[RMDB]
RNA sequence: GGGAACGACUCGAGUAGAGUCGAAAAGAAAGUGCUUAAACCGUGUGGACACGAAUGGCUAUAACCACAGAAACCUGAGGAAACAGGAAGCCACAACGCAAGCCAUGUGGUUUGCACACGGAAGAAAAUAUAGUCGUCAUUUCGAUGACGACUAUAUAAAAGAAACAACAACAACAAC
Reactivity to 2A3 in 0.01 (KOAc 150mM, MgCl2 10mM, bicine 150mM(pH8.5), 24C), signal-to-noise 6, nucleotides 027 to 126: g110a010a060a010g060u070g030c060u150u170a070a030a030c000c000g000u000g000u000g010g060a020c000a020c070g080a070a040u060g010g000c010u040a030u060a250a090c070c040a050c040a130g140a100a090a030c000c010u030g020a090g080g260a100a050a070c000a000g000g020a010a000g000c010c000a030c030a090a040c070g020c080a070a010g020c000c000a020u040g010u030g040g000u020u000u080g010c000a010c000a000c010g040g040a040a010g070a020a140a040
Reactivity to DMS in 0.01 (KOAc 150mM, MgCl2 10mM, bicine 150mM(pH8.5), 24C), signal-to-noise 5, nucleotides 027 to 126: g010a090a060a070g010u000g010c030u050u030a050a070a090c010c000g000u000g030u000g000g000a110c050a120c050g010a120a100u010g000g000c010u000a120u010a100a060c130c150a100c160a080g000a100a070a100c050c020u000g000a140g030g030a100a090a120c050a020g010g000a100a030g000c020c030a050c110a080a090c140g000c070a040a070g010c020c010a040u000g030u020g000g000u000u010u020g000c000a020c020a010c040g000g030a090a050g000a080a040a060